Structure probing data (DMS and 2A3) for a 177-nucleotide construct.
The reactions ran in a buffer of 150 mM KOAc, 10 mM MgCl2 and 150 mM bicine (pH 8.5), at 24 C.
2A3 adducts were read by reverse transcription with SuperScript II with manganese.
It was measured as part of the RMDB library OK2TRN.
The 2A3 profile rests on 9,953 reads.
RNA sequence: GGGAACGACUCGAGUAGAGUCGAAAAGGCACAGACGGACACUCCUUCUGACGUACAUUCUCACUCGCAUGGCGUAGUCAAGUCAUGACUGUGAGCGAGUACGAGUGAGGGUCAGUUCGAGUGUGCAGCAGACCUGACAAUUCGUUGUCGGGUCUGCAAAAGAAACAACAACAACAAC
Reactivity to DMS in 0.01 (KOAc 150mM, MgCl2 10mM, bicine 150mM(pH8.5), 24C), signal-to-noise 4, nucleotides 027 to 126: g020g040c020a050c040a070g010a160c080g000g010a020c020a230c060u000c000c030u010u000c010u000g000a110c020g020u000a040c110a110u020u000c000u000c040a020c000u000c110g010c010a050u010g000g010c000g010u010a080g010u000c130a070a140g010u000c120a080u000g000a050c030u000g000u000g000a040g010c150g000a110g010u000a020c030g000a040g010u010g010a060g000g020g010u010c070a060g000u010u000c100g020a070g010u000g010u000g010c040a120
Reactivity to 2A3 in 0.01 (KOAc 150mM, MgCl2 10mM, bicine 150mM(pH8.5), 24C), signal-to-noise 4, nucleotides 027 to 126: g090g000c030a020c010a030g230a060c070g020g010a000c010a010c030u030c000c000u030u020c010u020g080a050c010g030u060a020c020a100u100u030c010u000c000a000c000u030c010g010c000a030u050g090g000c010g040u050a040g110u070c060a050a040g070u040c030a060u070g030a070c000u010g000u010g020a020g000c030g040a040g000u000a010c010g000a020g050u040g010a010g040g000g020u020c050a020g000u000u000c010g000a010g060u000g000u000g010c010a000